The record gives the reactivity of an RNA of 207 nucleotides to 2A3. The reactions ran in a buffer of 150 mM KOAc, 10 mM MgCl2 and 150 mM bicine (pH 8.5), at 24 C.

RNA sequence: GGGAACGACUCGAGUAGAGUCGAAAAACACCAAAACUGAAAACGGAAGGCAAUCCUUCCACGACGAUACUUACUUUCCUUUGAUCGUCGUUUCUACUGGCAUAGCCACAAAGGAGAACAAACAUGAGCGCGGACACUGACUUCGGUCAGUGUCCAAGGAACAUUCACUCUUCGGAGUGAAUGUUCCAAAAGAAACAACAACAACAAC
Reactivity to 2A3 in 0.01 (KOAc 150mM, MgCl2 10mM, bicine 150mM(pH8.5), 24C), signal-to-noise 4, nucleotides 027 to 156: a000c090a100c010c080a090a120a010a040c120u260g090a100a080a020a030c070g040g000a020a010g020g020c170a070a150u290c000c000u000u030c000c000a000c020g000a000c000g000a010u110a170c010u100u040a020c010u060u120u100c010c020u060u010u080g060a020u030c000g010u000c010g000u030u040u050c060u060a070c040u000g000g020c060a240u110a170g030c000c030a050c030a010a050a060g020g050a050g040a030a050c070a070a100a040c100a110u300g060a070g160c150g010c080g020g000a000c000a000c000u000g000a000c000u020u060c160g050g000u000c000a000g000u000g000u000c000c000a000a000